An RNA of 177 nucleotides, treated with 2A3 and DMS and read out base by base. The data come from the RNA Mapping Database (RMDB), library M2PK50. For DMS the reverse transcriptase was MarathonRT.
RNA sequence: GGGAACGACUCGAGUAGAGUCGAAAACACACAAGGUUCGCCUUGUGUGCAAGAAUAGACGAAUACUACCGUAGAUGUAUUCAGGUCACAUAACUACGGAAAUGGCGUUCUGCUUCGGCAGAACGAAUUGUUAGUCCAAGUUCGCUUGGACUAACAAAAAAGAAACAACAACAACAAC
Reactivity to 2A3 in 0.01 (KOAc 150mM, MgCl2 10mM, bicine 150mM(pH8.5), 24C), signal-to-noise 4, nucleotides 027 to 126: c000a000c010a000c000a010a010g020g000u030u040c120g160c050c000u000u010g010u000g000u000g010c000a020a020g080a090a110u120a090g080a040c040g030a030a010u020a050c030u070a220c000c010g000u010a000g000a050u020g030u020a020u020u090c060a020g110g050u090c080a030c020a140u150a200a080c010u020a010c020g000g120a030a040a060u200g170g020c030g000u000u010c010u000g000c000u010u050c170g100g000c000a000g000a000a000c000g000a010a020
Reactivity to DMS in 0.01 (KOAc 150mM, MgCl2 10mM, bicine 150mM(pH8.5), 24C), signal-to-noise 4, nucleotides 027 to 126: c010a010c010a020c000a010a000g000g020u000u000c210g020c000c000u010u000g010u000g010u000g030c050a070a080g000a150a070u010a090g020a090c110g000a050a030u000a020c010u000a130c010c000g010u000a000g010a100u000g000u000a040u000u000c080a110g000g020u020c120a090c090a070u010a090a120c010u000a020c000g000g000a180a080a080u010g000g020c000g000u000u000c000u000g010c000u000u010c220g020g000c010a000g010a000a000c000g010a010a050
Notes:
The reactions ran in a buffer of 150 mM KOAc, 10 mM MgCl2 and 150 mM bicine (pH 8.5), at 24 C. Reactivities are given for positions 27 through 126. The 2A3 profile rests on 4,347 reads.